[RMDB]
RNA sequence: GGGAACGACUCGAGUAGAGUCGAAAAAACUGGCUUCUCCCUAAAUAAGUGAUCCAAGAACACAUAAGGCAGAAGCUACAAUGUCUGUUAUAACCUGGCCUUGAUAUUCCCACACCAUAAUUUCUGGAAAAUCCUAUUGGUUACACAGGUCAGUCCACAUACAGUCAAGGUUCGCCUUGACUGUAUGAAAAGAAACAACAACAACAAC
Reactivity to 2A3 in 0.01 (KOAc 150mM, MgCl2 10mM, bicine 150mM(pH8.5), 24C), signal-to-noise 5, nucleotides 027 to 156: a000a000c060u040g020g000c010u010u010c000u080c040c000c000u080a120a120a080u150a240a070g010u010g060a080u050c080c060a130a060g130a300a020c020a010c000a030u130a060a020g020g020c040a000g000a010a000g020c010u020a020c060a050a100u100g040u050c050u030g050u090u070a080u050a170a020c010c000u010g000g010c010c000u080u090g070a070u040a090u150u020c000c010c000a020c000a000c020c010a030u040a080a090u100u180u150c090u060g050g000a110a100a090a140u130c020c010u040a110u090u050g030g000u040u050a030c040a010c010a080g000g020u000c010a010g010u030c040c030a050
Reactivity to DMS in 0.01 (KOAc 150mM, MgCl2 10mM, bicine 150mM(pH8.5), 24C), signal-to-noise 3, nucleotides 027 to 156: a060a030c080u000g020g020c000u000u010c020u000c040c010c010u010a080a060a100u020a050a080g020u000g000a110u010c280c040a160a180g020a300a150c050a030c020a140u000a070a090g010g010c040a060g010a030a040g020c020u000a030c040a060a050u010g010u000c040u010g040u000u000a080u000a050a080c130c020u010g020g010c010c020u000u020g010a160u000a130u000u010c030c010c010a140c080a100c050c050a090u010a070a130u010u010u000c060u000g000g010a050a060a060a070u000c020c060u000a140u000u000g020g010u000u000a070c080a070c080a040g010g000u000c020a050g010u000c010c050a120